[RMDB]
RNA sequence: GGGAACGACUCGAGUAGAGUCGAAAAGCGGUUGAAAUACCGCUAAGUCACCAUUAUUGGAAAGACGAGUUGAAAUAAGUCCGGUACAGGGUUUUGUUAGUACCAAAAGGUGGGAAAGCAAGAUAGGACUCCAUCAAAUUUUCGAAUUUGAUGGAGUAAAAGAAACAACAACAACAAC
Reactivity to DMS in 0.01 (KOAc 150mM, MgCl2 10mM, bicine 150mM(pH8.5), 24C), signal-to-noise 8, nucleotides 027 to 126: g020c010g020g010u000u010g000a110a100a070u010a010c010c000g000c000u000a030a100g010u000c040a120c010c010a070u040u030a140u030u010g000g000a090a120a070g000a020c010g000a130g020u000u010g010a080a100a110u020a080a110g000u010c020c020g000g010u030a070c100a080g000g010g010u000u000u000u000g010u000u000a040g010u010a140c010c010a050a080a090a120g000g030u020g010g000g000a130a170a300g000c020a010a020g010a040u000a100g010g010
Reactivity to 2A3 in 0.01 (KOAc 150mM, MgCl2 10mM, bicine 150mM(pH8.5), 24C), signal-to-noise 5, nucleotides 027 to 126: g000c000g000g020u000u020g030a020a040a020u150a020c000c010g000c000u010a020a030g030u020c000a050c110c000a020u100u160a110u240u240g030g000a190a110a020g010a010c040g000a070g060u070u100g150a090a110a050u130a100a000g060u020c030c000g010g000u160a070c070a100g110g010g000u050u010u020u000g000u010u010a010g010u000a000c020c010a060a020a120a060g300g180u140g010g000g020a010a000a000g000c000a000a000g010a030u070a030g070g040